RNA sequence: GGGAACGACUCGAGUAGAGUCGAAAACCUUCUGGACGGCGGUUCGAUUCCGCCCAGGUCCACCAGAAGCACAUUGCACGGGCAGUGCGCUUCUGAUGGGCCUGACCUGGUUUCGACAGGGGGAGAUCAAGUCGUAAGAAUUCGUUCUUACGACUUGAAAAGAAACAACAACAACAAC
Reactivity to 2A3 in 0.01 (KOAc 150mM, MgCl2 10mM, bicine 150mM(pH8.5), 24C), signal-to-noise 8, nucleotides 027 to 126: c010c000u080u090c060u120g110g090a040c030g010g000c010g010g020u010u030c010g010a000u020u000c000c000g000c000c010c000a000g010g000u010c000c000a000c000c000a010g000a000a000g000c000a000c000a030u000u020g030c060a080c300g110g300g000c010a010g010u000g000c020g000c000u000u000c000u000g010a010u000g000g000g010c000c000u000g000a000c000c000u020g020g030u030u130u210c060g030a030c000a010g000g010g010g000g020a190g020a060u020
Reactivity to DMS in 0.01 (KOAc 150mM, MgCl2 10mM, bicine 150mM(pH8.5), 24C), signal-to-noise 6, nucleotides 027 to 126: c020c000u020u020c060u010g000g030a140c130g010g010c020g010g000u010u010c070g000a300u000u010c000c040g000c010c000c000a000g010g020u000c000c000a020c040c010a000g000a000a020g010c010a030c000a000u000u000g000c000a250c300g000g010g020c010a000g000u000g010c070g000c000u000u000c000u000g000a000u000g000g000g000c000c000u000g010a040c020c010u020g000g010u000u020u030c110g010a100c010a050g010g000g030g000g000a110g000a190u000